This 177-nucleotide RNA was probed chemically with DMS and 2A3. The DMS profile rests on 1,534 reads. For 2A3 the reverse transcriptase was SuperScript II with manganese.
[RMDB]
RNA sequence: GGGAACGACUCGAGUAGAGUCGAAAAGAUAUGGAGUCGUAACUUCUCUUGGAUUUAUGGAGGAGUAUGUAUGUCGGAAACGACAUAUGAAACUCCAUUGUCAGAGAAGAAGAAGACUCCUAAGUCAGAACUACAGUACGUUCGCGUACUGUAGUUCAAAAGAAACAACAACAACAAC
Reactivity to DMS in 0.01 (KOAc 150mM, MgCl2 10mM, bicine 150mM(pH8.5), 24C), signal-to-noise 2, nucleotides 027 to 126: g000a020u000a300u020g000g020a000g030u000c000g030u020a190a170c000u000u000c000u000c000u010u000g040g010a050u000u000u000a030u000g000g010a050g000g000a130g000u020a040u000g000u000a000u000g000u000c000g000g000a160a120a270c000g030a010c000a000u000a000u000g010a260a210a230c000u000c020c010a010u000u000g030u000c010a060g000a030g000a030a010g000a060a060g000a260a240g000a030c020u000c020c000u010a020a050g000u000c020a190
Reactivity to 2A3 in 0.01 (KOAc 150mM, MgCl2 10mM, bicine 150mM(pH8.5), 24C), signal-to-noise 2, nucleotides 027 to 126: g040a030u080a030u170g020g000a000g010u010c010g060u100a060a040c000u030u010c010u040c000u060u260g280g010a120u300u300u210a020u100g000g020a010g000g000a000g000u000a010u230g030u000a000u000g010u000c000g000g000a010a220a020c000g010a000c030a000u000a020u010g010a020a010a010c000u010c030c010a010u020u010g000u010c000a030g010a010g010a040a000g000a030a110g050a040a050g000a000c010u000c000c010u000a030a000g020u000c020a040